[RMDB]
RNA sequence: GGGAACGACUCGAGUAGAGUCGAAAAUACAGUGGUUGCUUACGCAUCUGGACUCAGCUGAGACUGAGCUCAGUGACUGCUGAUCUUGGCUGGGCUCAUCUGUGCAUGUUGGGGAUAAACUGUCAGUUAAUUUGAUGUGGCUUUGGCUGGAGUGACAACCGUCAUAUGCCUUCGGGCAUAUGACGGUAAAAGAAACAACAACAACAAC
Reactivity to 2A3 in 0.01 (KOAc 150mM, MgCl2 10mM, bicine 150mM(pH8.5), 24C), signal-to-noise 1, nucleotides 027 to 156: u300a020c070a040g080u060g080g050u100u070g010c010u060u050a080c080g060c040a070u020c060u040g000g030a060c030u020c010a020g000c060u240g030a000g060a160c080u050g000a000g000c000u000c010a030g010u030g110a050c000u040g050c030u110g040a230u040c040u030u030g000g000c000u000g000g000g000c000u000c040a060u020c060u060g070u030g000c030a060u200g030u100u200g060g050g000g020a000u030a020a070a000c010u000g040u080c010a060g030u020u040a070a220u120u120u150g040a030u040g060u080g040g000c000u030u000u050g000g000c010u030g010g010a000g010u020g100a080c000a070